[RMDB]
This 207-nucleotide RNA was probed chemically with 2A3. For 2A3 the reverse transcriptase was SuperScript II with manganese. Reactivities are given for positions 27 through 156. The 2A3 profile rests on 1,318 reads. The RNA was probed in 150 mM KOAc, 10 mM MgCl2 and 150 mM bicine (pH 8.5) at 24 C. Source: RMDB library M2RFPK, as collected in RNAgym.
RNA sequence: GGGAACGACUCGAGUAGAGUCGAAAAACGGUCGUACGCGACAGAGGCGCGGCUAGGUCGACGGACCGAACAAUGGCAUCCCGCAUUCUGCCAUCCGCCGCGCAGCUUCUUCUCAAACGGUGCGGAAAAAAGUAGGACACCUUCGGGUGUCCUACAACUAUCAGCAUCGGUUCGCCGAUGCUGAUAGAAAAGAAACAACAACAACAAC
Reactivity to 2A3 in 0.01 (KOAc 150mM, MgCl2 10mM, bicine 150mM(pH8.5), 24C), signal-to-noise 2, nucleotides 027 to 156: a000c060g010g010u000c000g020u030a070c200g000c040g100a010c000a020g100a080g020g000c010g000c000g010g040c000u000a020g000g000u010c030g070a210c190g130g050a000c000c000g000a000a000c000a020a050u000g000g010c000a040u120c050c010c020g010c010a030u300u080c020u040g000c000c000a000u020c020c050g000c000c000g000c000g000c010a000g000c000u090u080c020u030u010c040u000c020a080a060a050c050g000g010u000g010c000g000g000a000a090a020a080a000a000g000u000a010g000g000a000c000a000c010c010u040u090c240g030g020g010u010g000u010c000c000u000a000c000a000a000